This 177-nucleotide RNA was probed chemically with DMS and 2A3. The 2A3 profile rests on 1,574 reads. High 2A3 reactivity points to a flexible backbone, as in loops and unpaired stretches. The DMS profile rests on 1,494 reads.
RNA sequence: GGGAACGACUCGAGUAGAGUCGAAAAGCCAAUGAGGUGCUGGAACAUGUGAAAAAUACGGCUCUCAGUCGUCACGAUAUUGCCUGCUUAUUACCACGCGUUUCUAAUUUGGAACUAAAGCAGGGCACAGUUCUCAUGUUUUCGAACAUGAGAACUGAAAAGAAACAACAACAACAAC
Reactivity to DMS in 0.01 (KOAc 150mM, MgCl2 10mM, bicine 150mM(pH8.5), 24C), signal-to-noise 2, nucleotides 027 to 126: g030c000c020a080a160u000g000a060g010g020u000g010c020u000g000g010a150a110c120a060u040g010u000g020a030a070a130a120a120u000a120c040g000g020c040u000c030u020c070a050g000u000c050g000u060c080a270c120g000a120u010a100u010u000g030c000c000u000g010c000u000u000a040u010u000a130c150c040a030c120g000c130g000u000u000u000c030u000a140a130u000u000u020g010g000a010a060c100u000a090a010a040g020c020a000g000g000g050c140a060
Reactivity to 2A3 in 0.01 (KOAc 150mM, MgCl2 10mM, bicine 150mM(pH8.5), 24C), signal-to-noise 2, nucleotides 027 to 126: g000c000c000a000a150u180g050a020g080g090u130g060c010u020g020g020a080a000c010a080u120g070u070g220a060a050a020a030a050u150a090c000g000g010c010u000c000u000c000a000g000u020c030g080u050c060a050c150g130a120u080a120u230u160g120c030c000u000g040c020u090u000a070u080u100a250c010c040a030c050g060c030g010u000u080u000c170u100a300a300u170u140u170g020g000a010a030c020u070a190a020a000g000c010a020g000g000g000c030a020